[RMDB]
RNA sequence: GGGAACGACUCGAGUAGAGUCGAAAACAGGAGUUUAGCAUAGCUCCAUUCUACUAUGCAGCUAGUCGUCGUUUUCGACGUCUAGGAUAGACCGCUACAGCAGGGUCAAUGAACUGCUGAUUACCGCUUCUCGUAGCGCGGGUUCUGGCUACGUACAAAUCGAGGUAUAGUUCGCUAUACCUCGAUUAAAAGAAACAACAACAACAAC
Reactivity to 2A3 in 0.01 (KOAc 150mM, MgCl2 10mM, bicine 150mM(pH8.5), 24C), signal-to-noise 4, nucleotides 027 to 156: c040a030g020g000a010g000u030u070u150a020g000c000a010u010a010g020c010u010c010c020a050u140u120c000u020a090c010u010a010u010g040c020a030g030c010u000a000g020u020c000g000u000c010g040u100u060u130u300c050g010a000c010g000u040c000u000a010g030g010a020u060a060g010a020c020c010g000c040u100a090c010a000g000c000a000g000g010g000u020c060a040a130u230g020a030a050c000u000g010c000u000g010a050u010u150a050c010c010g020c040u080u030c060u040c070g010u010a000g000c010g000c020g050g040g000u080u090c070u080g030g000c000u010a010c020g030u020a040c070a040
Reactivity to DMS in 0.01 (KOAc 150mM, MgCl2 10mM, bicine 150mM(pH8.5), 24C), signal-to-noise 2, nucleotides 027 to 156: c050a240g000g000a060g030u010u000u000a060g000c000a030u000a020g010c040u030c090c270a170u000u010c020u000a040c010u000a000u020g020c000a300g030c000u000a040g050u000c010g010u000c010g000u000u000u000u010c020g020a040c000g000u010c000u000a020g010g010a210u010a190g000a080c040c020g020c020u000a130c020a030g020c010a020g010g010g030u000c050a110a140u010g010a090a080c010u000g010c000u000g000a130u000u000a070c030c030g010c050u010u000c030u000c040g030u020a020g020c010g000c020g010g000g000u000u010c070u010g010g030c030u000a050c010g000u010a130c140a090

The data come from the RNA Mapping Database (RMDB), library OK3TST. An RNA of 207 nucleotides, treated with 2A3 and DMS and read out base by base. The RNA was probed in 150 mM KOAc, 10 mM MgCl2 and 150 mM bicine (pH 8.5) at 24 C.